[RMDB]
RNA sequence: GGGAACGACUCGAGUAGAGUCGAAAAUUUAUAGGGCACUAAAGGAAUGAUCUCGAAAGAGGGACCGGUGUUCUAUAGUCCGUGUUGAAGAACGGGCCAGGGAGUUGUGAUGGAUGGCGAGGCUAAUCCGCUUAUUAUAUUUCGAUAUAAUAAGCGGAAAAGAAACAACAACAACAAC
Reactivity to DMS in 0.01 (KOAc 150mM, MgCl2 10mM, bicine 150mM(pH8.5), 24C), signal-to-noise 3, nucleotides 027 to 126: u030u040u000a010u000a000g000g020g010c020a000c010u010a090a100a170g010g010a300a250u030g000a090u010c000u000c010g000a140a080a170g000a020g000g010g000a020c000c010g020g010u000g020u000u000c000u000a010u010a040g010u010c050c010g040u010g000u000u010g030a090a090g000a060a050c150g010g030g000c010c060a070g000g010g000a080g000u010u010g010u020g010a100u010g010g000a060u010g000g010c030g000a070g000g000c040u010a070a160u010
Reactivity to 2A3 in 0.01 (KOAc 150mM, MgCl2 10mM, bicine 150mM(pH8.5), 24C), signal-to-noise 3, nucleotides 027 to 126: u010u020u000a020u010a000g010g000g030c010a010c030u100a130a150a160g020g080a160a300u110g010a020u000c000u000c010g050a070a100a070g000a010g000g000g000a000c000c000g010g000u000g000u020u000c020u000a020u000a000g040u030c020c010g020u050g030u090u090g090a090a090g010a080a030c020g000g030g000c040c010a040g010g050g040a100g020u110u060g030u090g060a060u070g000g050a020u030g010g000c050g020a000g020g000c050u070a060a040u020
Overview: This 177-nucleotide RNA was probed chemically with DMS and 2A3. In probing experiments dimethyl sulfate is read out at A N1 and C N3, which are open when not base-paired. 2A3 adducts were read by reverse transcription with SuperScript II with manganese. The RNA was probed in 150 mM KOAc, 10 mM MgCl2 and 150 mM bicine (pH 8.5) at 24 C. Values cover nucleotides 27 to 126.